[RMDB]
RNA sequence: GGGAACGACUCGAGUAGAGUCGAAAAUUAAUGAUUGCACACUUUGAUCAACUGCAGGCUUAAUAUUGACUGUUACUAUUUCAUCUGGUUCAAUGAAUCGCAAAGCUUGGUCAACUUCAUCAGCAUCAAUAAACGUCUCUUUCGAGAGACGUUUAUUAAAAGAAACAACAACAACAAC
Reactivity to 2A3 in 0.01 (KOAc 150mM, MgCl2 10mM, bicine 150mM(pH8.5), 24C), signal-to-noise 2, nucleotides 027 to 126: u070u060a030a160u120g120a000u040u140g020c020a020c000a020c110u060u100u060g030a010u060c050a060a040c070u100g010c030a030g140g000c000u150u130a120a030u050a170u140u040g000a010c010u020g040u060u040a040c060u030a230u120u230u110c020a090u030c060u140g060g000u140u060c010a020a020u060g030a030a040u070c030g000c070a060a060a000g000c000u020u020g030g040u010c000a040a010c050u070u060c030a140u040c020a030g050c000a000u070c030
Reactivity to DMS in 0.01 (KOAc 150mM, MgCl2 10mM, bicine 150mM(pH8.5), 24C), signal-to-noise 3, nucleotides 027 to 126: u000u010a050a070u010g000a060u000u010g010c030a090c120a090c120u010u000u000g000a030u000c040a060a060c120u010g010c010a100g010g000c040u000u000a080a060u000a050u020u000g010a060c050u000g000u020u000a080c170u000a110u010u000u040c060a050u000c060u000g000g000u010u010c050a060a020u000g000a060a070u010c190g000c090a040a040a060g020c060u000u000g010g010u000c010a030a060c100u000u000c100a090u000c080a060g010c100a050u000c090
Structure probing data (2A3 and DMS) for a 177-nucleotide construct. For 2A3 the reverse transcriptase was SuperScript II with manganese. The DMS profile rests on 1,872 reads. For DMS the reverse transcriptase was MarathonRT.